[RMDB]
RNA sequence: GGGAACGACUCGAGUAGAGUCGAAAAGAACCUGAGAGGUGGAGGUAAUCCCAGCACUUUGGGAGUGCGAGGCAGGCGGAUCACAAGGUCAGGAGAUCGAGACCAUCCUGGCCAACACGGUGAAACCGCAUCCGUACGGUUUCGACCGUACGGAUGCAAAAGAAACAACAACAACAAC
Reactivity to DMS in 0.01 (KOAc 150mM, MgCl2 10mM, bicine 150mM(pH8.5), 24C), signal-to-noise 1, nucleotides 027 to 126: g010a120a120c020c030u060g010a100g030a100g010g010u010g020g000a070g010g010u010a060a070u000c000c000c020a100g010c130a000c120u000u020u000g010g010g000a090g000u000g030c030g000a050g010g030c040a010g000g000c080g020g000a090u020c010a050c050a070a080g010g020u000c010a020g000g000a010g000a060u000c120g040a040g000a070c070c030a080u000c000c000u000g010g000c010c000a020a030c100a100c030g000g000u000g000a070a020a140c080c000
Record summary
Conditions: 150 mM KOAc, 10 mM MgCl2 and 150 mM bicine (pH 8.5), 24 C. Structure probing data (DMS) for a 177-nucleotide construct. It was measured as part of the RMDB library OK2TRN.